[RMDB]
RNA sequence: GGGAACGACUCGAGUAGAGUCGAAAAUUGGUCAUGCCAUGCAAGGCACUCUUUUGAAGUUGACUGUCGAUGUUGCUAACCCUAGCACUCCAGCCUACACUUUUACAACAGUGAAACCUGGCGCAGCAAAGUACAACGUUCGCGUUGUACAAAAGAAACAACAACAACAAC
Reactivity to 2A3 in 0.01 (KOAc 150mM, MgCl2 10mM, bicine 150mM(pH8.5), 24C), signal-to-noise 9, nucleotides 027 to 129: u090u060g020g000u070c040a020u110g020c040c020a030u100g050c050a070a080g030g000c020a030c010u040c010u050u080u030u110g080a090a050g020u080u090g080a110c020u020g030u110c080g030a060u130g030u210u040g010c020u030a110a120c000c020c030u010a010g000c000a010c020u010c010c010a020g010c000c020u120a040c040a020c030u050u080u120u250a110c100a200a020c010a050g000u020g050a080a020a010c010c000u020g000g000c020g000c020a040g000c020a090a030a030
Reactivity to DMS in 0.01 (KOAc 150mM, MgCl2 10mM, bicine 150mM(pH8.5), 24C), signal-to-noise 9, nucleotides 027 to 129: u030u030g000g030u000c100a110u050g000c020c020a060u050g030c150a130a090g020g070c040a060c060u020c040u000u000u000u000g050a080a080g040u060u030g030a100c040u010g020u000c100g030a070u040g040u000u060g000c050u020a100a120c040c090c110u000a060g000c000a110c000u000c030c030a040g000c010c010u060a250c080a050c030u020u010u030u100a100c230a090a090c210a050g010u040g050a060a090a120c220c010u000g000g000c080g000c090a040g010c050a070a000a080